[RMDB]
RNA sequence: GGGAACGACUCGAGUAGAGUCGAAAAGACAAGUAUUGGCAAGAAUACAUUUCCAUGUCUGAUCUUACAUCCUUGGCUAUGGUAUGCAUUGAAUCAAUUCAUAGGAUCAUAAGACUAGAUGACCUUCAUGAGUCACCUCAAUUCAUUUCAUGAAAUACCUCGGUACGUCAUUCGUGACGUACCGAGGAAAAGAAACAACAACAACAAC
Reactivity to 2A3 in 0.01 (KOAc 150mM, MgCl2 10mM, bicine 150mM(pH8.5), 24C), signal-to-noise 1, nucleotides 027 to 156: g060a000c000a040a070g000u010a050u080u110g070g100c040a070a000g030a230a030u150a060c050a180u000u070u000c060c150a150u070g040u050c060u000g100a230u030c000u000u030a000c010a130u030c000c000u010u020g130g000c090u150a060u120g060g120u110a060u150g050c130a080u050u070g110a030a020u070c080a120a050u020u120c030a060u050a030g010g100a050u050c000a030u070a050a070g100a090c040u060a120g030a130u030g010a000c000c000u000u120c010a010u070g000a000g040u050c010a010c030c050u000c040a080a070u120u070c040a030u040u080u050c000a000u010g070a040a090a000u000a030
This 207-nucleotide RNA was probed chemically with 2A3.
For 2A3, 368 sequencing reads were counted.
The data come from the RNA Mapping Database (RMDB), library OK3TST.
The reactions ran in a buffer of 150 mM KOAc, 10 mM MgCl2 and 150 mM bicine (pH 8.5), at 24 C.